[RMDB]
RNA sequence: GGGAACGACUCGAGUAGAGUCGAAAAUUUACUUUUACUGCUUCCACCACUCUGAGGUUCAUGUGUGCAUAGCCACAUUUACACGAGGAAGAGUGCUUGAACAAUCCGAUCAAGAUUAUGAUAUAUCGUGGUGCUAGUACUUCGGUACUAGCACCACAAAAGAAACAACAACAACAAC
Reactivity to 2A3 in 0.01 (KOAc 150mM, MgCl2 10mM, bicine 150mM(pH8.5), 24C), signal-to-noise 1, nucleotides 027 to 126: u000u000u220a070c100u100u140u140u000a040c030u010g230c030u000u000c000c030a050c000c000a040c020u000c030u070g130a020g050g000u030u030c150a050u040g000u080g000u050g000c030a070u300a050g070c000c080a070c000a000u000u000u100a150c300a020c100g020a050g190g060a150a000g000a000g000u000g130c000u020u010g000a000a000c000a200a000u010c000c000g090a090u000c000a060a020g000a070u050u050a030u120g170a000u090a050u050a050u230c010